[RMDB]
RNA sequence: GGGAACGACUCGAGUAGAGUCGAAAAGAUGAGAGUUCAACUGUAGCUGUAUAGUUGGAUUAGAACAGCUUUUAAUCGUUGUAUAGCUGUUUACAACGUGAAGAGUGAGCUCUUCACAACUCUCAGAGAUAGGUUUGUUCUUCGGAACAGAUCUAUCAAAAGAAACAACAACAACAAC
Reactivity to 2A3 in 0.01 (KOAc 150mM, MgCl2 10mM, bicine 150mM(pH8.5), 24C), signal-to-noise 9, nucleotides 027 to 126: g130a050u080g000a000g000a000g010u020u020c000a010a000c000u010g030u080a040g150c170u160g100u300a020u010a020g000u000u010g030g030a090u030u110a040g020a010a000c000a000g010c000u040u060u070u160a120a180u210c120g040u030u070g030u030a030u020a010g000c000u000g000u000u000u010a050c050a060a010c030g000u000g000a000a000g010a000g050u160g120a070g080c000u000c000u000u000c000a000c000a000a010c000u000c000u000c010a000g010a000
Reactivity to DMS in 0.01 (KOAc 150mM, MgCl2 10mM, bicine 150mM(pH8.5), 24C), signal-to-noise 9, nucleotides 027 to 126: g010a160u010g000a000g000a000g010u000u000c000a010a010c000u000g010u000a040g010c200u040g010u010a010u000a010g010u000u000g000g000a110u020u020a140g010a020a000c010a010g000c000u000u000u010u010a050a100u030c170g000u010u010g000u000a070u010a010g000c000u000g000u000u000u000a070c220a060a060c060g000u000g010a010a010g000a010g020u020g010a180g020c010u000c000u000u000c000a000c000a020a020c000u000c000u000c000a030g000a170